[RMDB]
RNA sequence: GGGAACGACUCGAGUAGAGUCGAAAAGUAAACAAUCCGGAAGCGACCAACGCCUUGAUUGACAAGGAUGGAUGGCUACAUUCUGGAGACAUAGCUUACUGGGACGAAGACGAACACUUCUUCAUAGUUGACCGCUUGAAGUCUUUGAUUAAAUACACAAUACUGGUACCUUCGGGUACCAGUAUUGAAAAGAAACAACAACAACAAC
Reactivity to DMS in 0.01 (KOAc 150mM, MgCl2 10mM, bicine 150mM(pH8.5), 24C), signal-to-noise 1, nucleotides 027 to 156: g050u000a090a080a050c050a110a200u000c020c010g020g050a000a020g000c110g010a070c000c030a010a160c040g000c050c000u020u000g000a300u010u000g010a260c040a000a030g020g000a070u000g020g020a100u010g020g010c030u000a060c070a070u000u010c020u000g010g020a060g000a100c080a100u000a100g020c010u010u000a090c020u000g000g010g010a120c060g000a000a020g010a160c050g020a140a110c100a100c020u010u000c020u000u000c020a100u010a150g000u020u010g030a050c030c050g000c000u010u000g030a060a100g000u000c050u000u010u000g000a180u010u010a050a050a080u020a110c070a130
Reactivity to 2A3 in 0.01 (KOAc 150mM, MgCl2 10mM, bicine 150mM(pH8.5), 24C), signal-to-noise 2, nucleotides 027 to 156: g020u060a000a050a090c020a060a080u000c000c000g000g060a010a010g130c100g280a300c060c000a070a070c020g070c010c010u060u050g080a250u150u300g060a140c030a030a020g000g060a040u070g030g070a070u000g020g000c000u050a060c020a080u020u000c000u010g020g000a060g000a010c000a050u170a030g010c010u010u010a010c010u040g000g000g090a010c040g010a000a010g010a010c050g040a150a020c010a000c040u030u030c000u060u040c080a090u070a120g010u030u110g040a100c000c060g060c050u010u030g020a110a010g010u020c040u040u120u100g060a060u120u160a020a100a080u180a010c060a010

Chemical mapping of a 207-nucleotide RNA with DMS and 2A3. The RNA was probed in 150 mM KOAc, 10 mM MgCl2 and 150 mM bicine (pH 8.5) at 24 C.